Conditions: 150 mM KOAc, 10 mM MgCl2 and 150 mM bicine (pH 8.5), 24 C. Chemical mapping of a 177-nucleotide RNA with 2A3 and DMS. For DMS the reverse transcriptase was MarathonRT.
[RMDB]
RNA sequence: GGGAACGACUCGAGUAGAGUCGAAAAGGGAACGUGGGGAAGUGAAACAUCUCAGUACCCACAGGAAGAGAAAACAACAUGUGAUUCCGUGAGUAGUGGCGAGCGAAAGCGGAAGAGGCUAAACCAUCCAUUUUAAGAUGUUCGCAUCUUAAAAUGGAAAAGAAACAACAACAACAAC
Reactivity to 2A3 in 0.01 (KOAc 150mM, MgCl2 10mM, bicine 150mM(pH8.5), 24C), signal-to-noise 2, nucleotides 027 to 126: g040g010g020a120a060c060g010u010g000g000g020g020a020a060g170u050g090a140a130a020c100a220u080c010u000c060a010g010u040a000c000c010c010a000c010a010g070g050a070a000g090a020g020a070a060a040a040c110a040a020c060a090u160g050u080g090a090u030u000c000c000g010u010g020a040g000u010a000g010u010g080g110c190g040a000g000c020g010a020a000a020g000c010g000g000a000a000g000a000g000g000c030u090a060a020a040c030c000a030u000
Reactivity to DMS in 0.01 (KOAc 150mM, MgCl2 10mM, bicine 150mM(pH8.5), 24C), signal-to-noise 2, nucleotides 027 to 126: g000g060g010a150a120c290g020u000g010g000g000g020a080a260g050u000g000a040a040a150c190a020u000c040u000c030a060g010u000a190c000c000c000a030c030a120g000g010a120a030g010a050g010a030a080a040a040c120a020a070c060a130u000g000u000g000a300u000u010c000c000g050u000g000a100g000u040a170g020u000g020g050c220g000a300g000c000g000a060a080a290g020c020g030g000a000a040g000a070g010g020c100u000a040a040a120c090c150a130u060
The data come from the RNA Mapping Database (RMDB), library RFMREP. The 2A3 profile rests on 2,278 reads.